[RMDB]
RNA sequence: GGGAACGACUCGAGUAGAGUCGAAAAUCGUCGUCGGUGAGCCCGUAACGCCGUAGGGCAGCCACCGCCGAAUCUUGGCGAGCCUGCAGCGCCAGCCGCGGCUCGGCGAUGUCCCAGGCCGCGGGCACAUGCAAAAUCCCUUCGGGGAUUUUGCAUGAAAAGAAACAACAACAACAAC
Reactivity to 2A3 in 0.01 (KOAc 150mM, MgCl2 10mM, bicine 150mM(pH8.5), 24C), signal-to-noise 2, nucleotides 027 to 126: u050c040g020u000c010g000u000c020g040g010u020g020a040g000c000c000c020g040u050a130a060c090g040c030c020g050u100a140g010g020g000c000a010g110c060c030a010c000c030g000c000c000g090a070a050u070c060u060u100g020g010c030g010a020g060c000c080u150g040c070a040g020c000g000c020c010a040g070c020c000g010c010g010g000c010u020c040g000g000c000g040a050u060g060u090c000c000c000a000g010g000c010c000g020c010g000g000g000c020a030
Reactivity to DMS in 0.01 (KOAc 150mM, MgCl2 10mM, bicine 150mM(pH8.5), 24C), signal-to-noise 2, nucleotides 027 to 126: u060c050g000u000c030g000u020c010g000g000u000g000a060g000c030c010c010g000u010a170a090c220g010c050c000g030u030a170g000g020g000c000a160g000c120c060a050c070c020g000c010c030g000a100a090u030c050u000u000g000g010c040g000a110g000c030c000u000g060c080a070g040c020g000c030c060a090g000c000c020g020c030g000g020c030u000c020g000g000c000g010a040u010g000u010c000c030c030a140g010g000c010c000g060c010g030g000g030c130a110

Overview:
An RNA of 177 nucleotides, treated with 2A3 and DMS and read out base by base. Values cover nucleotides 27 to 126. The DMS profile rests on 2,467 reads. The reactions ran in a buffer of 150 mM KOAc, 10 mM MgCl2 and 150 mM bicine (pH 8.5), at 24 C. For DMS the reverse transcriptase was MarathonRT.